[RMDB]
An RNA of 177 nucleotides, treated with DMS and 2A3 and read out base by base. DMS adducts were read by reverse transcription with MarathonRT. The data come from the RNA Mapping Database (RMDB), library RFMREP. Conditions: 150 mM KOAc, 10 mM MgCl2 and 150 mM bicine (pH 8.5), 24 C. For 2A3 the reverse transcriptase was SuperScript II with manganese.
RNA sequence: GGGAACGACUCGAGUAGAGUCGAAAACGUCUGUGAAAUACCACUACUCUCAAUGUUGUUUUACUUAUACCAUGAUGUAGCAUCUGUGUGGCCUCGCGGUCGCUCAGUUCUAGUUGUAAACUUGGGCCUAAUAUCGACAGUUCGCUGUCGAUAUUAGAAAAGAAACAACAACAACAAC
Reactivity to DMS in 0.01 (KOAc 150mM, MgCl2 10mM, bicine 150mM(pH8.5), 24C), signal-to-noise 2, nucleotides 027 to 126: c160g000u010c120u020g020u010g030a050a090a100u030a070c090c030a110c050u000a090c060u010c010u000c070a130a100u010g000u000u000g010u000u000u000u000a080c070u000u000a140u010a190c080c030a030u010g010a120u020g010u020a070g000c070a020u000c020u010g030u010g010u000g030g010c030c010u000c280g010c300g020g060u000c030g000c000u000c010a020g020u000u010c020u000a030g020u010u010g000u010a050a050a050c060u000u010g010g010g010c050
Reactivity to 2A3 in 0.01 (KOAc 150mM, MgCl2 10mM, bicine 150mM(pH8.5), 24C), signal-to-noise 1, nucleotides 027 to 126: c060g040u010c070u040g060u000g040a130a080a010u100a090c060c010a040c010u050a020c000u040c020u010c080a100a100u110g010u020u020g020u030u040u000u090a110c020u050u060a060u040a150c000c000a020u020g030a000u070g080u040a000g000c010a050u000c020u010g010u000g010u010g110g030c000c030u040c050g060c090g060g000u050c010g010c010u000c000a010g020u070u010c020u000a050g020u040u050g120u120a120a140a040c020u020u010g030g000g020c000